An RNA of 177 nucleotides, treated with DMS and 2A3 and read out base by base.
The DMS profile rests on 5,194 reads.
Values are in units of 0.01, from 0 to 300, in steps of 10.
It was measured as part of the RMDB library OK2TRN.
Conditions: 150 mM KOAc, 10 mM MgCl2 and 150 mM bicine (pH 8.5), 24 C.
RNA sequence: GGGAACGACUCGAGUAGAGUCGAAAAGUGUGGGAUAGACGGGACUAGUCUUGGCCGUCGUCUUCCAGGACGAUGCUAAAGGAGUCGGGGUGCAUACCGUGGUUCCAUGGAGGAACGGUACGCCUUGCGAGGCUUAAUCUUUCGAGAUUAAGCCUCGAAAAGAAACAACAACAACAAC
Reactivity to DMS in 0.01 (KOAc 150mM, MgCl2 10mM, bicine 150mM(pH8.5), 24C), signal-to-noise 4, nucleotides 027 to 126: g020u010g010u010g000g010g020a120u010a080g010a090c100g010g010g000a050c060u010a080g000u000c050u000u000g000g020c040c110g010u010c010g010u010c010u000u010c200c260a180g010g010a030c010g010a020u000g020c010u000a040a060a050g000g000a040g010u010c050g000g000g000g000u000g000c080a080u000a020c030c010g020u000g020g000u000u000c020c030a120u000g020g000a160g010g010a060a050c020g000g000u000a010c070g000c020c130u000u000g010
Reactivity to 2A3 in 0.01 (KOAc 150mM, MgCl2 10mM, bicine 150mM(pH8.5), 24C), signal-to-noise 2, nucleotides 027 to 126: g070u030g010u080g030g010g020a060u050a060g080a010c040g010g000g010a040c050u050a040g040u010c000u020u030g010g030c020c010g010u000c020g000u000c000u230u060c040c000a020g000g020a000c000g000a010u030g010c010u100a100a010a040g050g000a040g000u050c000g000g010g000g000u030g010c020a030u020a020c030c000g020u050g060g130u150u040c030c010a050u090g140g060a150g010g010a000a000c010g000g000u010a000c010g010c000c030u010u040g000